[RMDB]
RNA sequence: GGGAACGACUCGAGUAGAGUCGAAAAUAAAAUCGUAGGGCGAGACGAUCGACGUAAAUCGCUCAAACUUCUCGAGACCAAAGGAAUACGCUUCGGUAACUCGCUCUAAUCCCGAGCGAUAAAUGAACUAGUCAACUAGAUUCGUCUAGUUGACUAGAAAAGAAACAACAACAACAAC
Reactivity to 2A3 in 0.01 (KOAc 150mM, MgCl2 10mM, bicine 150mM(pH8.5), 24C), signal-to-noise 6, nucleotides 027 to 126: u050a000a070a010a030u050c020g010u020a020g000g010g000c010g010a000g020a050c080g010a020u020c010g030a030c000g010u010a020a060a130u060c030g020c030u000c010a020a050a050c120u210u060c120u080c120g030a040g020a070c070c080a150a070a050g090g010a090a040u020a030c020g010c090u040u030c010g000g000u020a040a040c000u000c000g000c010u000c000u010a010a030u010c000c000c000g000a010g000c010g030a040u090a060a160a070u170g050a080a050
Reactivity to DMS in 0.01 (KOAc 150mM, MgCl2 10mM, bicine 150mM(pH8.5), 24C), signal-to-noise 6, nucleotides 027 to 126: u010a070a080a100a060u000c040g020u000a040g020g000g000c020g010a000g020a070c160g010a030u000c020g010a080c040g020u010a020a060a100u000c030g020c020u000c020a050a080a120c230u000u010c130u000c150g010a050g010a110c130c080a070a070a120g000g000a070a140u000a010c020g010c120u020u010c010g000g010u000a060a090c020u000c000g000c000u000c010u010a090a100u000c020c000c020g020a110g000c020g000a040u010a050a050a100u010g000a070a160
Structure probing data (2A3 and DMS) for a 177-nucleotide construct. For DMS, 7,335 sequencing reads were counted. DMS adducts were read by reverse transcription with MarathonRT. The data come from the RNA Mapping Database (RMDB), library M2PK90.